[RMDB]
RNA sequence: GGGAACGACUCGAGUAGAGUCGAAAAUCGGGGCUGGUUCUCCCGGGAGAACUAACUAACCCACCGUAUCAUGAAAUGGCGCUUGAGGGGCUGAAGACUCGACCCGCUGUUCCGUAUAAGGUCGAAAUAUAAAGGAGUUUUUCGAAACUCCUUUAUAAAAAGAAACAACAACAACAAC
Reactivity to DMS in 0.01 (KOAc 150mM, MgCl2 10mM, bicine 150mM(pH8.5), 24C), signal-to-noise 4, nucleotides 027 to 126: u010c080g000g020g000g020c080u000g000g010u000u010c020u000c000c060c210g010g020g010a020g010a030a020c020u010a030a060c090u020a100a190c030c020c020a180c080c040g010u000a030u010c090a070u010g000a070a070a070u000g010g010c030g030c130u000u000g000a090g020g000g010g030c060u000g000a080a090g000a110c040u000c030g000a060c040c080c040g010c090u000g020u000u000c020c020g020u010a050u000a090a080g000g000u000c040g000a050a090a140
Structure probing data (DMS) for a 177-nucleotide construct. High DMS reactivity at an A or C suggests that its Watson-Crick edge is free. Values cover nucleotides 27 to 126. Source: RMDB library OK2TRN, as collected in RNAgym. The RNA was probed in 150 mM KOAc, 10 mM MgCl2 and 150 mM bicine (pH 8.5) at 24 C.